[RMDB]
Chemical mapping of a 177-nucleotide RNA with 2A3 and DMS.
The data come from the RNA Mapping Database (RMDB), library OK2TRN.
Values cover nucleotides 27 to 126.
For 2A3 the reverse transcriptase was SuperScript II with manganese.

RNA sequence: GGGAACGACUCGAGUAGAGUCGAAAAACUGUCCUGGUGCUGGUGGGCGUGUCUCUCAUGCUAAUGUAUUAUAAUCAGCGCAUAAUGAGCAGUGAGGACUGGCUGUCUUGGUUUUGGUGAUUUGGGGUAUAGGCGAUAUAUUCGUAUAUCGCCUAUAAAAAGAAACAACAACAACAAC
Reactivity to 2A3 in 0.01 (KOAc 150mM, MgCl2 10mM, bicine 150mM(pH8.5), 24C), signal-to-noise 2, nucleotides 027 to 126: a000c040u030g030u060c020c000u020g050g000u020g050c010u040g000g040u040g020g020g000c010g060u030g010u020c020u020c020u020c080a030u040g000c030u050a150a040u180g100u090a120u210u130a100u130a130a110u110c020a040g030c010g000c040a010u090a200a100u190g100a030g040c030a030g090u030g030a040g070g040a010c010u020g020g050c010u010g030u080c010u010u070g000g000u050u020u040u080g050g000u060g060a160u030u040u140g000g000g000g000
Reactivity to DMS in 0.01 (KOAc 150mM, MgCl2 10mM, bicine 150mM(pH8.5), 24C), signal-to-noise 6, nucleotides 027 to 126: a080c100u000g010u000c020c010u000g020g020u000g010c030u000g010g010u000g010g010g010c040g040u000g000u010c100u010c070u000c030a040u000g000c020u010a080a100u000g010u000a080u000u010a080u010a110a080u000c070a050g020c110g020c070a060u010a070a070u000g010a070g020c020a040g010u000g000a080g000g010a060c030u010g010g000c060u000g000u010c020u000u000g010g000u000u010u000u000g010g010u000g000a080u000u000u000g010g000g000g020